[RMDB]
RNA sequence: GGGAACGACUCGAGUAGAGUCGAAAAGAUAUGGAUAGAUAACGUGCACAAGAGGUCGGAAACGACUCCCCACCUUGUGAACUACACGGAAGCUAUCCUAAGUCAAACUUCGGCUUCGGCCGAAGAAUCAUAUGCAGUGGUUCGCCACUGCAUAUGAAAAAGAAACAACAACAACAAC
Reactivity to 2A3 in 0.01 (KOAc 150mM, MgCl2 10mM, bicine 150mM(pH8.5), 24C), signal-to-noise 1, nucleotides 027 to 126: g010a000u070a030u150g000g000a000u000a020g010a000u020a280a030c010g000u020g000c020a000c000a000a010g030a010g030g000u020c020g030g000a070a070a060c030g030a020c000u060c030c010c010c000a010c000c000u000u000g000u010g010a030a060c130u220a030c100a000c000g020g020a230a130g020c000u000a000u020c000c000u000a110a010g020u020c070a080a050a070c020u000u010c000g000g000c010u020u050c230g140g000c000c000g000a000a000g000a000a020
Reactivity to DMS in 0.01 (KOAc 150mM, MgCl2 10mM, bicine 150mM(pH8.5), 24C), signal-to-noise 4, nucleotides 027 to 126: g010a060u010a300u010g000g010a040u010a000g010a020u000a170a280c010g010u000g000c000a030c000a010a010g010a100g010g000u000c020g000g010a100a070a180c030g000a030c010u010c050c010c010c040a300c050c010u000u000g000u000g000a040a040c100u020a300c010a010c010g010g000a070a100g000c000u010a000u000c000c000u010a040a160g010u020c020a080a100a180c000u000u000c010g010g000c000u000u000c200g020g000c020c000g010a010a000g010a100a110
This 177-nucleotide RNA was probed chemically with 2A3 and DMS. Reactivities are rounded to 0.1 and cut off at 0 and 3. Reactivities are given for positions 27 through 126. It was measured as part of the RMDB library TTRDEL. The DMS profile rests on 3,046 reads.